Chemical mapping of a 177-nucleotide RNA with 2A3 and DMS. Conditions: 150 mM KOAc, 10 mM MgCl2 and 150 mM bicine (pH 8.5), 24 C. Values cover nucleotides 27 to 126. The 2A3 profile rests on 5,820 reads.

RNA sequence: GGGAACGACUCGAGUAGAGUCGAAAAAUGAAUUGAUUCGUCAAUUCAUGACCGCAAGCGAGCCGAAAGGCAUUUUAUGCGUACGCUGGCGAUAGCCUAAAAAUCAUCGUGUCUUCGGACACGAUAACUGUCCCCUUUUAUUCGUAAAAGGGGACAGAAAAGAAACAACAACAACAAC
Reactivity to 2A3 in 0.01 (KOAc 150mM, MgCl2 10mM, bicine 150mM(pH8.5), 24C), signal-to-noise 4, nucleotides 027 to 126: a000u000g000a010a000u010u010g010a010u020u060c180g070u010c060a000a010u000u000c000a000u000g030a030c020c040g020c030a010a010g030c010g080a010g010c020c000g100a080a050a030g050g000c010a010u020u070u020u040a150u140g080c030g020u050a030c030g000c030u040g040g000c020g040a070u120a060g040c020c010u100a110a120a040a020a030u190c080a000u000c010g010u000g010u000c000u020u050c180g100g000a000c000a000c010g010a000u010a010a030
Reactivity to DMS in 0.01 (KOAc 150mM, MgCl2 10mM, bicine 150mM(pH8.5), 24C), signal-to-noise 4, nucleotides 027 to 126: a020u000g000a020a000u000u000g010a020u010u010c170g010u000c010a010a000u000u000c000a000u000g010a110c090c020g000c030a060a040g000c030g010a210g030c010c030g000a090a070a190g010g020c030a080u000u010u000u010a080u010g000c150g030u000a110c070g010c020u000g000g020c030g000a080u000a090g020c010c000u010a010a050a050a070a100u010c160a030u000c010g010u000g000u000c000u010u000c170g010g000a000c000a000c000g000a010u010a010a070